[RMDB]
RNA sequence: GGGAACGACUCGAGUAGAGUCGAAAAGAUAUGGACUGGCCAGACUUCAACAGCACAGGUCGGAAACGACCUGUGACAUGAAGCUGGUCCAGUCCUAAGUCAAAACCUUCAUGUUCGCAUGAAGGAACAUGCCAUUAGGGUUCGCCCUAAUGGCAUGAAAAGAAACAACAACAACAAC
Reactivity to 2A3 in 0.01 (KOAc 150mM, MgCl2 10mM, bicine 150mM(pH8.5), 24C), signal-to-noise 2, nucleotides 027 to 126: g000a000u050a050u120g040g010a000c010u010g020g050c010c000a260g060a300c060u020u030c040a080a110c040a160g030c000a000c020a010g000g000u000c010g000g020a130a120a050c010g000a010c030c000u020g000u000g000a010c010a010u040g010a000a010g000c010u000g030g000u000c000c000a010g000u000c000c000u000a000a000g000u000c020a000a000a080a200c000c000u000u010c030a020u010g070u060u110c300g010c160a010u000g040a000a000g000g020a010a010
Reactivity to DMS in 0.01 (KOAc 150mM, MgCl2 10mM, bicine 150mM(pH8.5), 24C), signal-to-noise 3, nucleotides 027 to 126: g010a080u000a300u020g010g010a030c000u010g000g000c000c000a000g010a120c030u010u000c000a020a080c290a240g010c000a000c000a010g000g000u000c000g000g010a050a110a300c000g020a020c010c000u000g000u000g010a020c070a190u000g010a020a010g000c000u000g000g010u030c000c000a010g010u000c000c000u000a010a100g010u020c050a120a050a140a180c000c000u000u000c000a000u000g010u020u020c300g010c000a000u000g000a020a010g020g020a050a110
The record gives the reactivity of an RNA of 177 nucleotides to 2A3 and DMS. Values cover nucleotides 27 to 126. It was measured as part of the RMDB library TTRDES. The 2A3 profile rests on 4,936 reads. For 2A3 the reverse transcriptase was SuperScript II with manganese.